The record gives the reactivity of an RNA of 207 nucleotides to DMS and 2A3. It was measured as part of the RMDB library OK3TST. The RNA was probed in 150 mM KOAc, 10 mM MgCl2 and 150 mM bicine (pH 8.5) at 24 C. For 2A3, 3,270 sequencing reads were counted.

RNA sequence: GGGAACGACUCGAGUAGAGUCGAAAAGCGAAAGGAUGGACCUAAUGAACGCGUACGGAAACCAUCCAUAUUGGAUUCGGAUGGGAAAGCAUGCCUAUCGACACUAGCCAUCCGAAACGUACGUUGCUAUUACGCGUUACAUACUAGUACUCCGUACGUCUAUACAGCACUUCGGUGCUGUAUAGACAAAAGAAACAACAACAACAAC
Reactivity to DMS in 0.01 (KOAc 150mM, MgCl2 10mM, bicine 150mM(pH8.5), 24C), signal-to-noise 2, nucleotides 027 to 156: g000c060g000a160a130a040g010g010a120u000g020g000a120c080c040u010a050a090u000g010a090a040c080g020c000g010u010a070c110g000g000a150a110a120c040c010a060u000c040c040a080u020a050u000u000g000g000a220u000u040c010g010g010a040u000g010g030g000a100a130a080g000c080a150u000g040c050c040u010a240u000c090g000a030c000a030c020u010a230g000c000c000a000u000c000c010g000a000a030a060c040g000u000a040c090g010u000u000g070c050u010a120u010u000a050c070g000c040g000u000u000a160c050a080u000a100c030u000a020g020u010a060c030u000c010c030g030u000a110c120
Reactivity to 2A3 in 0.01 (KOAc 150mM, MgCl2 10mM, bicine 150mM(pH8.5), 24C), signal-to-noise 5, nucleotides 027 to 156: g070c040g070a170a010a010g010g010a000u020g020g040a120c010c030u100a070a040u100g030a060a010c020g010c000g020u030a000c030g020g050a050a070a080c030c030a000u040c040c040a030u150a080u120u200g040g020a040u030u000c010g000g000a000u000g000g000g080a050a060a070g060c120a060u150g050c020c020u250a250u210c120g070a020c040a010c070u040a020g100c000c010a000u000c000c000g000a000a010a000c010g000u020a000c030g000u020u110g020c030u030a060u090u020a040c050g030c020g020u010u020a100c010a020u080a050c030u060a020g050u030a040c010u000c070c030g070u100a090c040